[RMDB]
Conditions: 150 mM KOAc, 10 mM MgCl2 and 150 mM bicine (pH 8.5), 24 C. This 177-nucleotide RNA was probed chemically with 2A3. Reactivities are given for positions 27 through 126. 2A3 adducts were read by reverse transcription with SuperScript II with manganese. Values are in units of 0.01, from 0 to 300, in steps of 10. The data come from the RNA Mapping Database (RMDB), library M2PK50.
RNA sequence: GGGAACGACUCGAGUAGAGUCGAAAAGCAGUUGACUUCGGUCAACUGCAAAUAAAGCUCAAGACGAGCACAGGGAGGAACGUCUUGAGCAACCCAAUAAAAAAACAUGUAAGUUCGCUUACAUGAACUCGUAUGACGUCUUCGGACGUCAUACGAGAAAAGAAACAACAACAACAAC
Reactivity to 2A3 in 0.01 (KOAc 150mM, MgCl2 10mM, bicine 150mM(pH8.5), 24C), signal-to-noise 1, nucleotides 027 to 126: g000c010a000g000u000u030g010a000c010u030u060c170g050g000u000c000a020a000c000u000g000c000a000a000a000u000a000a000a000g000c010u000c000a000a000g000a000c020g020a000g150c080a030c090a150g260g080g040a190g110g000a130a020c000g000u030c000u020u000g000a000g000c020a000a000c000c000c000a010a020u210a030a060a010a000a000a000a010c030a010u030g010u030a000a020g000u010u130c270g010c150u000u010a010c040a000u020g040a010a040